RNA sequence: GGGAACGACUCGAGUAGAGUCGAAAAAUGCUGGACACCUCCAGCCGUAAGCUGGUUGCGUGGGAUGGCACCACCGACGGUGCUGCCGUUGGCAUUCUUGCGGUUGCUGCUGACCAGACCAGCACCAUCCCAAUCGGUAAUUCGUUACCGAUUGGGAAAAAGAAACAACAACAACAAC
Reactivity to 2A3 in 0.01 (KOAc 150mM, MgCl2 10mM, bicine 150mM(pH8.5), 24C), signal-to-noise 3, nucleotides 027 to 126: a010u040g000c000u000g020g030a020c020a100c050c040u000c000c010a000g020c000c010g140u080a040a040g000c010u020g060g030u230u060g080c140g080u100g040g110g040a140u070g010g010c010a010c030c010a010c010c010g060a090c050g010g000u080g000c060u050g040c010c050g190u120u240g020g000c020a040u150u000c050u100u160g010c020g030g000u070u090g070c150u020g000c000u040g060a060c010c030a040g050a050c000c000a000g010c000a000c010c000a040
Reactivity to DMS in 0.01 (KOAc 150mM, MgCl2 10mM, bicine 150mM(pH8.5), 24C), signal-to-noise 4, nucleotides 027 to 126: a080u000g020c000u000g010g020a300c100a080c110c040u000c010c000a010g000c000c070g000u000a050a120g000c080u000g000g010u000u000g010c160g000u010g000g000g010a210u000g000g000c010a040c070c040a070c030c030g010a050c170g010g020u000g000c140u000g010c040c100g030u000u000g020g030c020a040u010u010c090u000u000g010c050g000g000u010u010g030c130u000g010c020u000g000a140c020c040a200g010a070c060c000a040g000c020a110c110c060a190